[RMDB]
RNA sequence: GGGAACGACUCGAGUAGAGUCGAAAAAGCCAGCCGGCUAGGACGUCGAGCGCCGGUUCGGUCUUCAAGCCGGACACCAGCGCCGACUCGAUCGGCUCGUGUGGCGGCUGGUCGACGGCCGACGUGACGUCAGUAUCAGGUUCGCCUGAUACUGACGAAAAGAAACAACAACAACAAC
Reactivity to 2A3 in 0.01 (KOAc 150mM, MgCl2 10mM, bicine 150mM(pH8.5), 24C), signal-to-noise 2, nucleotides 027 to 126: a010g040c020c010a000g070c080c060g060g000c030u090a090g080g140a030c030g010u020c010g000a100g080c020g000c040c020g050g000u030u050c040g030g030u020c060u080u090c080a080a000g010c020c000g010g030a030c020a020c050c040a020g040c000g020c020c000g060a040c010u000c040g070a130u030c030g100g030c070u030c030g090u140g010u030g070g090c020g020g040c030u000g010g020u040c020g020a030c000g000g000c010c000g000a030c020g060u070g040a020
Reactivity to DMS in 0.01 (KOAc 150mM, MgCl2 10mM, bicine 150mM(pH8.5), 24C), signal-to-noise 3, nucleotides 027 to 126: a060g010c020c010a080g010c070c060g000g030c050u000a140g020g010a020c080g000u010c020g000a220g010c070g010c010c070g000g020u000u000c050g020g020u010c030u020u020c240a080a120g020c010c000g000g020a170c140a030c040c050a040g000c190g030c000c000g000a030c030u010c120g020a090u000c100g010g000c040u000c100g000u000g020u000g010g000c040g000g020c000u000g000g010u000c050g010a100c040g000g020c010c010g020a030c040g000u000g000a120
The record gives the reactivity of an RNA of 177 nucleotides to 2A3 and DMS. The RNA was probed in 150 mM KOAc, 10 mM MgCl2 and 150 mM bicine (pH 8.5) at 24 C. It was measured as part of the RMDB library OK2TST. For DMS the reverse transcriptase was MarathonRT.